Structure probing data (2A3) for a 177-nucleotide construct. It was measured as part of the RMDB library OK1LIB. The RNA was probed in 150 mM KOAc, 10 mM MgCl2 and 150 mM bicine (pH 8.5) at 24 C. For 2A3 the reverse transcriptase was SuperScript II with manganese.
RNA sequence: GGGAACGACUCGAGUAGAGUCGAAAACAAAAACAAAAGUGCGAUAAACGGAAGAGAAGACUCCCGAAAAAGCUGGAAAGAAAAUAACUGGAAAAACCAGAUCGCACGACGUAAUCCAGCAACAAAACGCAGUACAUGAGUUCGCUCAUGUACUGCGAAAAGAAACAACAACAACAAC
Reactivity to 2A3 in 0.01 (KOAc 150mM, MgCl2 10mM, bicine 150mM(pH8.5), 24C), signal-to-noise 1, nucleotides 027 to 126: c000a030a120a010a000a000c080a030a080a030a000g000u000g000c000g000a000u070a070a230a030c040g160g000a260a020g090a080g070a150a140g070a300c000u000c000c030c010g020a100a100a000a000a000g000c000u000g000g070a010a280a000g150a090a000a060a000u150a050a020c000u000g010g080a000a000a000a230a160c000c000a000g020a060u000c000g000c000a000c010g010a000c050g090u010a000a000u000c000c000a010g000c010a090a000c040a000a110a000a110